[RMDB]
RNA sequence: GGGAACGACUCGAGUAGAGUCGAAAACGACAUAGAGAGAUGAGCAAGUUGUUGGCCACUGUCGUUAGCGGACAGAAACAGGAUAGACAGGGAGGAGAACGGAGGAGGCCCCAGCUUGAUAAGGAUCUCAUUCUCCAAGUUUCGACUUGGAGAAUGAAAAAGAAACAACAACAACAAC
Reactivity to DMS in 0.01 (KOAc 150mM, MgCl2 10mM, bicine 150mM(pH8.5), 24C), signal-to-noise 3, nucleotides 027 to 126: c060g010a080c090a080u000a120g020a110g000a070g000a050u000g000a080g010c050a070a090g010u000u010g010u010u000g000g010c020c040a140c040u010g000u000c020g000u010u000a080g030c130g010g000a040c040a060g000a050a040a080c110a080g000g000a080u000a080g010a050c120a060g020g000g020a060g010g020a050g000a060a080c110g000g000a070g000g000a070g000g020c040c020c180c040a060g010c060u000u000g010a080u030a080a080g000g000a100u000c070
Reactivity to 2A3 in 0.01 (KOAc 150mM, MgCl2 10mM, bicine 150mM(pH8.5), 24C), signal-to-noise 2, nucleotides 027 to 126: c010g080a010c000a030u200a010g120a020g000a010g030a110u040g060a060g060c000a100a080g040u040u020g010u040u050g070g000c010c000a060c000u000g000u080c020g050u030u090a060g020c060g060g030a000c010a040g000a020a020a020c060a000g060g030a050u070a060g050a010c040a030g000g040g010a020g030g000a040g000a080a010c070g020g000a010g010g010a040g000g000c010c010c000c010a020g020c020u020u040g030a040u090a170a010g070g020a010u020c020

The record gives the reactivity of an RNA of 177 nucleotides to DMS and 2A3. Values cover nucleotides 27 to 126. The RNA was probed in 150 mM KOAc, 10 mM MgCl2 and 150 mM bicine (pH 8.5) at 24 C. For DMS the reverse transcriptase was MarathonRT. For DMS, 2,698 sequencing reads were counted.